[RMDB]
RNA sequence: GGGAACGACUCGAGUAGAGUCGAAAACCCAGUCUCGGUUCCUGUUCUGGGAGCUUGGGGCUGAGUAGCCACCAGCCCUGCUCUCUGCAGUGUUCUAUUGUGGAUUGCUUGUGUGCUGGCAGGCUACCAAAGUAUAUACGUUCGCGUAUAUACUUUGAAAAGAAACAACAACAACAAC
Reactivity to DMS in 0.01 (KOAc 150mM, MgCl2 10mM, bicine 150mM(pH8.5), 24C), signal-to-noise 8, nucleotides 027 to 126: c000c000c000a020g010u000c000u000c000g000g010u000u000c000c000u010g010u010u020c240u020g010g010g010a010g000c010u000u010g050g000g010g010c000u000g000a160g010u000a010g010c010c010a300c020c010a010g000c000c000c010u000g000c000u000c030u000c010u000g010c010a010g010u000g010u010u010c160u010a020u000u000g020u000g000g000a010u000u000g000c010u010u000g010u010g030u020g020c000u000g000g010c060a070g020g000c000u000a010c010
Reactivity to 2A3 in 0.01 (KOAc 150mM, MgCl2 10mM, bicine 150mM(pH8.5), 24C), signal-to-noise 8, nucleotides 027 to 126: c000c000c000a010g010u010c010u000c010g030g000u010u030c010c000u090g160u300u300c130u300g020g000g010a010g000c010u170u300g020g000g000g000c000u000g000a010g000u000a000g000c010c010a000c000c000a010g000c000c000c010u000g000c000u000c000u000c000u000g000c000a010g000u010g130u270u100c150u200a040u030u010g000u020g010g010a010u000u020g010c050u260u100g050u030g060u130g090c000u010g030g000c050a140g010g000c000u000a000c000